[RMDB]
RNA sequence: GGGAACGACUCGAGUAGAGUCGAAAACGCCUUCUAAAUCAUCACUGAUCAAAGAGAGCUGGCAUCAAGCACACACCCCAAGUGUAGCUCAUGACGUCUCGCCUAGCCACACCCCCACGGGAAACAGAGAUGGAGCGUGAUUCGUCACGCUCCAUCUAAAAGAAACAACAACAACAAC
Reactivity to 2A3 in 0.01 (KOAc 150mM, MgCl2 10mM, bicine 150mM(pH8.5), 24C), signal-to-noise 1, nucleotides 027 to 126: c010g090c070c000u040u000c050u140a050a090a130u180c070a020u050c000a010c060u070g000a090u030c090a000a100a030g110a020g000a000g000c060u070g000g000c010a030u040c050a060a010g010c060a000c000a000c010a000c050c030c040c000a110a000g000u040g000u050a000g000c000u000c000a050u040g050a140c050g020u000c000u030c170g070c000c000u050a000g010c030c000a010c010a010c030c030c000c000c000a030c000g050g000g010a000a190a000c100a000g100